[RMDB]
RNA sequence: GGGAACGACUCGAGUAGAGUCGAAAAGCAGCCUUCAGUGACCUUGGGCAUGUGUUCUGAGUGCCCUCACUGGGUGCACACCUUAGUGACCCCCUGCUGGUACAUUCUGCUGUGAAGAAUAACACGGCUCAUAAUUCAAAUUCGUUUGAAUUAUGAGAAAAGAAACAACAACAACAAC
Reactivity to 2A3 in 0.01 (KOAc 150mM, MgCl2 10mM, bicine 150mM(pH8.5), 24C), signal-to-noise 9, nucleotides 027 to 126: g000c040a010g050c000c020u110u100c030a020g000u020g070a060c040c070u120u110g000g000g030c030a020u070g140u020g040u160u140c120u140g130a060g070u020g000c000c000c000u000c000a010c000u010g000g010g020u060g000c010a010c010a010c040c020u060u160a070g030u090g130a150c000c000c000c000c020u010g010c030u030g020g020u050a030c020a080u080u060c010u050g020c020u010g020u020g060a120a120g050a110a020u100a060a020c030a010c030g030g000
Reactivity to DMS in 0.01 (KOAc 150mM, MgCl2 10mM, bicine 150mM(pH8.5), 24C), signal-to-noise 9, nucleotides 027 to 126: g020c070a090g010c040c030u000u010c050a040g020u000g000a080c280c180u010u010g020g010g020c010a020u000g010u010g010u010u010c150u000g010a180g010u000g010c010c010c020u000c020a020c010u000g000g000g010u000g010c090a090c110a100c080c060u000u000a060g020u000g000a160c040c020c010c030c020u000g010c040u000g010g010u010a080c160a090u000u000c040u000g010c030u000g020u000g000a100a090g010a090a070u000a090a140c050a050c070g000g000

The record gives the reactivity of an RNA of 177 nucleotides to 2A3 and DMS. Source: RMDB library OK2TST, as collected in RNAgym. 2A3 adducts were read by reverse transcription with SuperScript II with manganese. The DMS profile rests on 37,825 reads. DMS adducts were read by reverse transcription with MarathonRT.